[RMDB]
RNA sequence: GGGAACGACUCGAGUAGAGUCGAAAAUCAACUAAACUUAUCUCAUAGAUGGCAUUGCUAUAAUCAUCUGUUGUAAAAUUUGAAGCAAUUAUCUCUGUAAUUUCUGUAUUUAAUCUAAAUAUUGUGCCCGGUACUACGAUUUCGAUCGUAGUACCGGAAAAGAAACAACAACAACAAC
Reactivity to 2A3 in 0.01 (KOAc 150mM, MgCl2 10mM, bicine 150mM(pH8.5), 24C), signal-to-noise 2, nucleotides 027 to 126: u090c090a120a210c100u280a180a000a100c010u000u200a090u120c110u040c060a040u060a000g000a000u000g000g000c000a060u000u000g030c000u010a050u080a300a030u010c000a010u000c060u020g110u040u020g070u110a000a000a220a160u100u070u020g060a130a000g020c020a020a020u070u000a050u300c060u000c040u070g040u300a090a000u110u200u010c000u080g030u000a020u000u040u040a030a060u130c130u120a040a030a020u170a120u080u180g000u020g100c000